RNA sequence: GGGAACGACUCGAGUAGAGUCGAAAAGCUCUGUAACGGGAUGGGAUCCGAAGCCCCAUUGAGGGAUAAUACAGGCUCUCCCAUCCAACUCCUAUUCCAACACGUCCUCGUCGUACAGAGUGGUAACUAAGGUAUAGCUCCUUCGGGAGCUAUACAACAAGGACAACUUCUUCGGAAGUUGUCCUUGAAAAGAAACAACAACAACAAC
Reactivity to DMS in 0.01 (KOAc 150mM, MgCl2 10mM, bicine 150mM(pH8.5), 24C), signal-to-noise 1, nucleotides 027 to 156: g000c000u000c020u000g030u000a090a070c060g010g020g030a010u000g030g050g040a090u020c070c050g000a080a220g030c030c000c010c010a300u020u010g040a170g020g010g020a050u000a100a140u000a110c140a190g030g000c080u000c120u000c030c000c000a010u000c020c040a080a060c050u020c010c010u040a160u000u030c100c050a100a080c050a080c080g000u000c010c020u000c040g040u000c050g030u000a000c050a090g000a040g010u000g000g000u000a070a120c040u000a080a080g010g010u000a020u000a020g030c000u000c000c000u000u010c300g090g050g000a020g000c010u000a000u000a010c000a110a110
Reactivity to 2A3 in 0.01 (KOAc 150mM, MgCl2 10mM, bicine 150mM(pH8.5), 24C), signal-to-noise 1, nucleotides 027 to 156: g000c000u010c010u010g020u020a250a040c020g010g000g010a010u000g000g000g020a080u170c050c000g010a050a030g030c000c000c010c020a200u100u200g040a290g060g000g000a040u070a180a040u130a150c150a080g000g000c000u010c000u010c010c000c000a020u010c000c000a000a000c010u000c010c010u030a070u090u080c040c020a020a000c050a050c170g020u070c080c030u060c000g070u010c020g040u010a000c020a000g050a000g000u050g000g020u040a100a070c060u020a180a000g070g000u000a000u010a000g000c000u000c000c000u030u130c120g020g000g040a000g000c000u000a000u010a000c000a000a000